[RMDB]
RNA sequence: GGGAACGACUCGAGUAGAGUCGAAAAAUGGCCGUUUUAUAGGCUGGUUCGUUCCAGUCACAGCCAUACCGGAGUAUGCGAAGCAGUGGUUGCAACCCUGGUCCAUCCUUCUUCGUAAGGGUGGUAAUCCUAGCGAUAAGUUCGCUUAUCGCUAGGAAAAAGAAACAACAACAACAAC
Reactivity to DMS in 0.01 (KOAc 150mM, MgCl2 10mM, bicine 150mM(pH8.5), 24C), signal-to-noise 5, nucleotides 027 to 126: a040u000g010g010c000c030g000u010u010u010u010a170u010a140g020g010c000u000g000g000u000u000c300g000u000u000c000c010a020g020u000c010a140c050a040g000c000c000a040u000a100c040c030g010g010a060g010u000a050u010g010c080g010a060a060g030c050a060g010u000g000g010u000u000g000c110a070a100c020c010c000u010g010g000u000c000c000a010u000c000c010u000u000c010u000u010c240g000u010a020a000g000g020g010u000g010g010u010a030a100
Reactivity to 2A3 in 0.01 (KOAc 150mM, MgCl2 10mM, bicine 150mM(pH8.5), 24C), signal-to-noise 2, nucleotides 027 to 126: a010u030g010g000c020c000g040u040u030u080u160a240u090a100g000g030c020u000g000g060u070u120c090g160u270u000c000c000a020g000u020c010a020c020a070g000c020c000a030u050a020c020c000g040g000a040g020u100a100u190g040c020g010a020a000g000c030a010g030u040g080g070u120u040g010c030a050a090c000c000c030u080g070g010u000c000c000a010u010c010c000u030u000c010u100u120c040g130u230a010a000g000g000g010u000g000g000u010a000a040
The record gives the reactivity of an RNA of 177 nucleotides to DMS and 2A3. The data come from the RNA Mapping Database (RMDB), library OK2TRN. 2A3 adducts were read by reverse transcription with SuperScript II with manganese. The DMS profile rests on 6,883 reads.